[RMDB]
RNA sequence: GGGAACGACUCGAGUAGAGUCGAAAACGGCGCCUCUGGUCGACCGGUUGUCUGAUAAGGCAGUGCCGGGCAGCUACGCGCUAGGUGAUAAAGGCUGAAAGCAUCUAAGCCUGAGGUAUCCCCUGAAACCAGUUUCUUGGUUCGCCAAGAAACUGGUAAAAGAAACAACAACAACAAC
Reactivity to DMS in 0.01 (KOAc 150mM, MgCl2 10mM, bicine 150mM(pH8.5), 24C), signal-to-noise 2, nucleotides 027 to 126: c060g020g000c010g010c000c000u020c000u000g010g000u020c060g000a150c010c020g000g010u040u030g030u010c000u000g000a230u100a150a020g000g010c000a050g050u040g030c010c020g000g010g020c130a130g000c010u000a010c050g010c000g000c010u060a080g000g020u010g000a100u030a060a170a010g000g000c000u000g010a160a150a120g040c180a080u010c070u020a210a130g000c000c000u000g010a080g000g030u020a100u050c010c000c000c060u000g010a070a130
Reactivity to 2A3 in 0.01 (KOAc 150mM, MgCl2 10mM, bicine 150mM(pH8.5), 24C), signal-to-noise 2, nucleotides 027 to 126: c050g020g050c030g000c030c000u000c020u010g000g060u070c030g160a110c000c000g000g050u100u050g020u010c000u000g110a260u200a300a100g000g000c000a000g050u050g150c000c000g000g000g000c030a040g010c000u000a030c130g000c030g010c000u000a040g000g110u120g000a000u050a080a080a000g020g010c000u010g050a030a090a050g080c060a040u080c050u110a000a000g000c000c010u000g000a010g090g010u080a100u030c010c000c010c000u050g110a030a040